[RMDB]
The record gives the reactivity of an RNA of 177 nucleotides to DMS and 2A3.

RNA sequence: GGGAACGACUCGAGUAGAGUCGAAAAGAUAUGGAAAGCUGACAUCGAUCGUACUGUCUCGGAAACGAGAUUACGGGAGUCACUUCCUAAGUCAAAACGAUUAGUGGCGUUCGCGCCACUAAUCGAACACCUCUGAACACUUCGGUGUUCAGAGGUGAAAAGAAACAACAACAACAAC
Reactivity to DMS in 0.01 (KOAc 150mM, MgCl2 10mM, bicine 150mM(pH8.5), 24C), signal-to-noise 1, nucleotides 027 to 126: g010a020u000a300u000g000g000a040a060a070g030c200u000g020a000c000a200u010c130g000a090u000c000g060u010a070c300u000g000u000c000u000c000g010g000a080a040a140c010g020a020g020a010u000u000a000c010g000g000g000a040g030u000c000a080c000u010u000c000c000u010a010a130g010u000c020a040a040a100a120c060g010a010u000u000a000g040u000g000g000c000g060u000u010c240g020c070g020c000c000a000c010u000a000a000u000c010g000a030a210
Reactivity to 2A3 in 0.01 (KOAc 150mM, MgCl2 10mM, bicine 150mM(pH8.5), 24C), signal-to-noise 1, nucleotides 027 to 126: g020a020u060a010u050g000g040a160a060a060g000c300u030g020a010c030a300u270c110g170a090u100c000g020u010a040c200u100g030u070c020u010c000g030g030a080a080a050c030g000a000g000a020u010u060a010c000g010g010g020a000g020u010c000a010c020u000u010c000c010u030a090a020g070u010c050a070a070a040a000c030g000a000u010u000a000g000u000g010g000c060g000u100u130c300g000c000g000c120c000a040c010u010a000a000u010c000g010a010a010
For DMS, 673 sequencing reads were counted.